Conditions: 150 mM KOAc, 10 mM MgCl2 and 150 mM bicine (pH 8.5), 24 C. Chemical mapping of a 177-nucleotide RNA with 2A3 and DMS. The data come from the RNA Mapping Database (RMDB), library VIROID. The DMS profile rests on 3,515 reads.
RNA sequence: GGGAACGACUCGAGUAGAGUCGAAAAGGUGCCCUAUUCGGAGCACUGCAGUUCCCGAUAGAAAGGCUAAGAACCUCGCAAUGAGGUAAGGUGGGACUUUUCCUUCGGGAACCAAGCGGUUGGUUCCACCAUACAUUUCCUUCGGGAAAUGUAUGGUAAAAGAAACAACAACAACAAC
Reactivity to 2A3 in 0.01 (KOAc 150mM, MgCl2 10mM, bicine 150mM(pH8.5), 24C), signal-to-noise 2, nucleotides 027 to 126: g090g040u120g040c000c000c020u060a240u030u190c090g020g000a060g030c010a000c020u030g010c010a000g000u010u000c000c000c000g000a000u020a000g030a000a010a010g030g000c040u080a040a040g060a120a050c010c000u030c030g000c170a250a300u300g000a010g000g040u030a050a010g110g030u140g020g020g030a150c000u020u040u030u010c000c000u010u010c020g000g000g000a000a000c000c000a100a030g050c020g080g010u070u120g090g020u010u000c000c000
Reactivity to DMS in 0.01 (KOAc 150mM, MgCl2 10mM, bicine 150mM(pH8.5), 24C), signal-to-noise 3, nucleotides 027 to 126: g010g010u010g000c010c000c030u020a130u000u000c130g020g000a070g010c010a030c010u000g010c040a250g000u000u000c010c000c000g000a030u000a050g000a020a030a020g000g000c040u000a130a160g010a160a060c010c010u000c000g010c190a150a090u020g010a010g010g010u020a020a070g010g010u010g010g010g000a120c030u000u000u000u000c010c040u000u000c020g000g010g010a010a010c000c050a110a110g010c060g000g010u010u000g020g000u000u000c000c020